[RMDB]
RNA sequence: GGGAACGACUCGAGUAGAGUCGAAAACUGUCGUUCUUCGGAACGACAGAAAGAACGCGUGCGUCACGCAAGGAGGAGCGUGUGGGACGCGACAAACCCAAAAAAGCGUUCGGUUCGCCGAACGCAACUCUACAUGCACCUUCGGGUGCAUGUAGAGAAAAGAAACAACAACAACAAC
Reactivity to DMS in 0.01 (KOAc 150mM, MgCl2 10mM, bicine 150mM(pH8.5), 24C), signal-to-noise 2, nucleotides 027 to 126: c000u000g000u000c000g030u000u000c000u010u020c230g010g000a020a000c000g000a010c000a010g000a040a060a100g010a080a130c040g010c010g000u000g010c010g020u050c000a000c000g020c040a040a100g030g000a300g000g000a110g000c000g070u000g030u000g040g010g000a020c000g030c020g000a050c060a120a080a100c000c000c000a000a060a050a090a090a110g000c000g000u010u010c010g000g000u000u020c190g010c000c000g000a000a000c000g000c000a000a020
Reactivity to 2A3 in 0.01 (KOAc 150mM, MgCl2 10mM, bicine 150mM(pH8.5), 24C), signal-to-noise 2, nucleotides 027 to 126: c000u000g010u000c000g000u010u000c010u050u030c170g090g000a000a000c000g000a000c000a000g000a000a010a010g040a100a010c020g010c010g020u130g030c030g110u060c010a000c000g050c050a050a070g110g070a070g020g040a120g030c020g010u030g000u050g240g060g050a010c010g000c000g020a000c010a010a080a030c000c000c000a010a140a010a010a030a010g000c000g000u000u000c020g010g020u050u030c240g010c040c010g000a000a000c000g020c000a000a010
An RNA of 177 nucleotides, treated with DMS and 2A3 and read out base by base.
Conditions: 150 mM KOAc, 10 mM MgCl2 and 150 mM bicine (pH 8.5), 24 C.
The 2A3 profile rests on 5,815 reads.
The DMS profile rests on 1,371 reads.